[RMDB]
RNA sequence: GGGAACGACUCGAGUAGAGUCGAAAAGGGUGAGACCUAGGAACCGUAGGGGUAUUCUCAAAGGAAGCUUUUGCAGUGACGCCCAUGUAAUUGGGAUAUAACAACAGAACUCGUAUGAGUAGCCUAAUAAAUCGGACCUUCUUCGGAAGGUCCGAAAGUAUCAGUAUCGCUUCGGCGAUACUGAUACAAAAGAAACAACAACAACAAC
Reactivity to 2A3 in 0.01 (KOAc 150mM, MgCl2 10mM, bicine 150mM(pH8.5), 24C), signal-to-noise 1, nucleotides 027 to 156: g070g010g030u100g050a050g060a040c000c000u000a070g020g130a040a010c010c010g060u030a030g010g010g000g020u010a090u050u040c040u000c090a110a110a010g050g010a070a000g000c040u110u040u080u040g010c080a030g000u000g090a000c050g000c000c010c000a050u110g120u150a120a120u090u020g000g000g000a000u030a000u040a140a030c030a000a010c010a010g010a030a000c000u020c070g030u110a070u220g000a000g030u030a030g010c010c000u030a110a090u060a080a140a030u060c000g010g010a020c000c020u000u000c000u000u000c010g090g010a000a000g000g020u010c000c000g000a000a000a000
Annotation
Source: RMDB library M2RFPK, as collected in RNAgym. This 207-nucleotide RNA was probed chemically with 2A3. The RNA was probed in 150 mM KOAc, 10 mM MgCl2 and 150 mM bicine (pH 8.5) at 24 C.